An RNA of 177 nucleotides, treated with 2A3 and DMS and read out base by base. The reactions ran in a buffer of 150 mM KOAc, 10 mM MgCl2 and 150 mM bicine (pH 8.5), at 24 C. For 2A3, 9,784 sequencing reads were counted. The DMS profile rests on 5,733 reads. It was measured as part of the RMDB library TTRDES.
[RMDB]
RNA sequence: GGGAACGACUCGAGUAGAGUCGAAAAUUAAUGAUAUGGAUGAUCGGUAAACUCUCGUGGAGCUUACGAGUCGGAAACGACUCGAAGCGAUGAAACGAGAGUGCCAGAUCAUCCUAAGUCUAGAGAACCCUACUUUUAUGUUCGCAUAAAAGUAGGGAAAAGAAACAACAACAACAAC
Reactivity to 2A3 in 0.01 (KOAc 150mM, MgCl2 10mM, bicine 150mM(pH8.5), 24C), signal-to-noise 3, nucleotides 027 to 126: u100u040a070a150u210g010a030u020a030u160g000g000a000u000g000a000u010c000g000g040u110a290a220a060c000u010c000u000c010g010u020g040g020a010g020c000u020u040a200c050g000a000g000u000c000g000g010a070a020a040c010g010a000c010u000c000g000a000a000g000c010g150a300u020g000a010a020a000c010g010a000g000a000g000u000g000c020c010a000g010a000u010c000a000u010c000c000u000a000a010g000u000c020u040a120g040a030g030a300a120
Reactivity to DMS in 0.01 (KOAc 150mM, MgCl2 10mM, bicine 150mM(pH8.5), 24C), signal-to-noise 4, nucleotides 027 to 126: u010u010a090a130u020g010a040u010a300u010g000g010a020u000g000a020u000c000g000g000u000a060a130a100c000u000c000u000c000g000u000g000g000a040g010c010u000u000a120c020g000a020g010u000c000g010g000a040a070a160c010g010a020c000u000c000g010a060a020g010c010g000a070u020g000a070a170a020c000g000a010g010a010g040u000g000c040c030a120g010a010u000c000a000u000c000c000u000a010a090g000u000c000u000a230g000a170g000a120a210